[RMDB]
RNA sequence: GGGAACGACUCGAGUAGAGUCGAAAAUACGACGUAUUCGUACGUCGUAAAGGUUCGAAAGUACAAAGGAGCAAAAGCAUGAGCUCCUAAAAAUCAUGCAAAACACGAGCCGAUUCGUCGGCUCGAACGUGACUGAAUACUUCGGUAUUCAGUCACGAAAAGAAACAACAACAACAAC
Reactivity to 2A3 in 0.01 (KOAc 150mM, MgCl2 10mM, bicine 150mM(pH8.5), 24C), signal-to-noise 1, nucleotides 027 to 126: u030a000c000g030a000c000g010u000a010u030u040c160g010u010a000c000g030u000c000g000u000a030a000a020g090g000u060u110c070g030a100a090a000g040u050a050c090a090a240a080g000g000a020g000c020a100a140a130a050g020c000a020u040g000a000g010c000u010c000c000u070a030a030a000a000a000u020c000a000u000g000c030a020a000a150a000c140a030c040g030a000g000c040c010g000a010u030u070c300g050u000c000g020g020c010u010c000g000a000a030
The record gives the reactivity of an RNA of 177 nucleotides to 2A3.
Conditions: 150 mM KOAc, 10 mM MgCl2 and 150 mM bicine (pH 8.5), 24 C.
It was measured as part of the RMDB library M2PK50.